[RMDB]
RNA sequence: GGGAACGACUCGAGUAGAGUCGAAAAGAAAAGUUGUCGAGACGAAGACAGCGUUCGUCGAAAACGGUACCUCGGCUUGGUGCCGAAGCCGAAAACGAUCGAGAGUCAUGAUCGGAUGACGAAGAAAGGGUAAGUAUUUCUUCGGAAAUACUUACCCAAAAGAAACAACAACAACAAC
Reactivity to DMS in 0.01 (KOAc 150mM, MgCl2 10mM, bicine 150mM(pH8.5), 24C), signal-to-noise 4, nucleotides 027 to 126: g000a080a110a100a090g000u000u010g010u000c030g020a180g000a130c170g000a100a090g000a070c110a090g000c040g000u010u000c000g020u000c010g000a070a050a130a180c030g000g000u000a110c300c090u000c000g000g000c020u000u070g010g030u020g010c010c010g010a010a020g000c000c000g000a030a020a050a060c020g010a010u000c000g010a140g000a170g000u030c160a100u050g000a070u000c020g000g000a110u030g010a020c000g000a020a050g000a100a090a130
Reactivity to 2A3 in 0.01 (KOAc 150mM, MgCl2 10mM, bicine 150mM(pH8.5), 24C), signal-to-noise 6, nucleotides 027 to 126: g140a000a050a000a010g000u020u010g010u010c050g030a060g020a240c190g080a090a030g000a010c030a000g010c010g060u030u000c010g000u000c000g030a010a020a040a090c020g000g020u020a030c010c030u000c000g010g000c040u110u230g240g050u270g050c000c000g000a000a000g020c000c000g040a040a060a020a040c010g000a000u010c020g020a020g010a050g300u170c110a150u250g010a050u010c000g000g040a090u190g000a010c010g020a040a020g040a070a080a030

An RNA of 177 nucleotides, treated with DMS and 2A3 and read out base by base. For 2A3 the reverse transcriptase was SuperScript II with manganese. It was measured as part of the RMDB library OK1LIB. High 2A3 reactivity points to a flexible backbone, as in loops and unpaired stretches. Conditions: 150 mM KOAc, 10 mM MgCl2 and 150 mM bicine (pH 8.5), 24 C. The 2A3 profile rests on 4,451 reads.